The record gives the reactivity of an RNA of 177 nucleotides to 2A3 and DMS. The 2A3 profile rests on 800 reads. For DMS the reverse transcriptase was MarathonRT. It was measured as part of the RMDB library OK2TRN. 2A3 adducts were read by reverse transcription with SuperScript II with manganese.
RNA sequence: GGGAACGACUCGAGUAGAGUCGAAAAACAGAUUUUAGGAGUCCCCCAUCACAGGGAGAAAGUUCAGUAAGUGCUUGAGAUUCCACAUACAUCUGAGGUGCUCCCUUAUUAGCAAAGAAGAGCAACAAUCGUCUCAUUAGUUCGCUAAUGAGACGAUAAAAGAAACAACAACAACAAC
Reactivity to 2A3 in 0.01 (KOAc 150mM, MgCl2 10mM, bicine 150mM(pH8.5), 24C), signal-to-noise 1, nucleotides 027 to 126: a000c000a020g110a110u050u120u160u210a090g030g000a030g030u010c000c010c000c000c050a010u130c050a010c040a060g040g030g000a010g090a130a030a020g070u030u090c050a020g030u200a300a080g090u060g010c000u050u030g050a060g030a200u000u090c040c010a040c000a020u190a020c040a060u070c020u020g040a040g070g100u020g000c010u000c030c000c030u020u070a120u080u050a070g070c010a010a070a000g040a040a000g000a020g060c010a000a070c010a040
Reactivity to DMS in 0.01 (KOAc 150mM, MgCl2 10mM, bicine 150mM(pH8.5), 24C), signal-to-noise 3, nucleotides 027 to 126: a110c060a020g010a060u000u000u010u000a120g020g000a080g010u010c020c040c010c000c010a090u000c220a090c230a100g010g000g030a040g020a070a040a010g010u010u010c010a090g000u020a120a140g000u000g010c080u000u000g000a220g010a090u000u010c030c020a070c140a090u000a070c160a060u000c010u010g000a080g000g000u010g000c010u000c020c040c010u000u000a060u000u010a150g000c130a070a070a060g000a030a060g000a080g000c030a060a030c160a070